[RMDB]
Conditions: 150 mM KOAc, 10 mM MgCl2 and 150 mM bicine (pH 8.5), 24 C.
An RNA of 207 nucleotides, treated with 2A3 and DMS and read out base by base.
DMS (dimethyl sulfate) methylates the pairing face of unpaired adenines and cytosines.
Reactivities are rounded to 0.1 and cut off at 0 and 3.
2A3 adducts were read by reverse transcription with SuperScript II with manganese.
RNA sequence: GGGAACGACUCGAGUAGAGUCGAAAAGAGGGUCCAAGUUACAGCUAGCACACAUGGGUGUACCAAUGUCAUCAUUCACUACACCAGUGUGGAGAUUUAUUCUAUCUGAUCUUCAGAAUUCAAGUAAAUAUAGAAUGAGGUUAUACAAAUCUCUGGAUAUAUUACGUGGGUUCGCCCACGUAAUAUAAAAAGAAACAACAACAACAAC
Reactivity to 2A3 in 0.01 (KOAc 150mM, MgCl2 10mM, bicine 150mM(pH8.5), 24C), signal-to-noise 3, nucleotides 027 to 156: g090a010g010g010g010u020c040c020a030a020g070u100u130a090c030a080g040c050u060a020g030c010a010c000a000c010a120u160g160g000g000u020g000u020a010c050c110a020a020u080g120u190c060a170u130c000a020u100u040c000a010c040u020a010c000a020c000c010a010g000u000g000u010g090g010a050g000a020u040u200u120a080u150u040c050u030a100u010c010u010g050a050u020c000u070u050c050a050g050a150a110u080u070c040a050a020g020u090a110a080a070u150a020u030a070g090a040a070u060g010a030g050g000u090u080a120u040a160c070a070a120a080u090c080u010c000u030g020g010a010
Reactivity to DMS in 0.01 (KOAc 150mM, MgCl2 10mM, bicine 150mM(pH8.5), 24C), signal-to-noise 2, nucleotides 027 to 156: g020a120g030g060g000u000c010c030a030a160g030u000u000a060c050a080g040c050u000a150g020c050a070c010a010c000a050u010g000g030g030u020g010u000a040c090c040a050a060u000g030u000c110a160u000c050a060u000u020c040a060c100u010a050c010a020c000c000a060g030u000g030u000g010g000a110g020a100u000u000u000a030u010u010c000u000a080u000c070u010g010a080u000c030u000u010c030a110g010a080a130u000u000c060a000a090g020u010a060a070a110u000a110u000a050g010a060a080u000g000a050g020g020u010u000a120u000a050c100a090a080a030u000c030u000c000u020g020g010a300
For DMS the reverse transcriptase was MarathonRT. Reactivities are given for positions 27 through 156.